[RMDB]
RNA sequence: GGGAACGACUCGAGUAGAGUCGAAAAGAUAUGGAGCGUGCUAGGGAGCCUGUCACUCGGAAACGAGUGAUAAAGGCGAGGAUCUAGUCACGCUCCUAAGUCAAACCCAAGUCUUCGGACUUGGGAACAGUAAGCGUUAGUUCGCUAACGCUUACUGAAAAGAAACAACAACAACAAC
Reactivity to 2A3 in 0.01 (KOAc 150mM, MgCl2 10mM, bicine 150mM(pH8.5), 24C), signal-to-noise 2, nucleotides 027 to 126: g000a000u030a030u140g000g000a010g000c000g000u020g010c000u000a010g030g010g020a040g000c000c000u030g020u030c000a000c000u000c000g000g020a030a030a020c010g000a000g030u020g020a010u050a020a180a000g000g010c010g050a190g010g000a020u000c000u000a010g020u110c000a000c010g010c000u000c000c000u000a000a000g000u000c000a040a020a050c000c000c000a000a000g000u000c010u070u290c300g140g000a010c000u000u000g000g000g000a020a020
Reactivity to DMS in 0.01 (KOAc 150mM, MgCl2 10mM, bicine 150mM(pH8.5), 24C), signal-to-noise 3, nucleotides 027 to 126: g000a010u000a150u020g010g000a010g050c000g050u000g020c010u000a010g000g000g000a020g030c000c010u010g010u000c000a000c000u000c000g010g000a030a030a070c000g010a030g020u000g010a010u000a000a100a050g040g010c000g010a030g020g010a010u000c000u010a000g000u000c010a020c010g000c000u000c000c000u010a000a050g000u000c020a140a170a230c010c000c000a000a010g000u010c000u000u010c250g030g010a010c000u010u000g000g000g010a000a030

An RNA of 177 nucleotides, treated with 2A3 and DMS and read out base by base. The DMS profile rests on 5,293 reads. 2A3 adducts were read by reverse transcription with SuperScript II with manganese.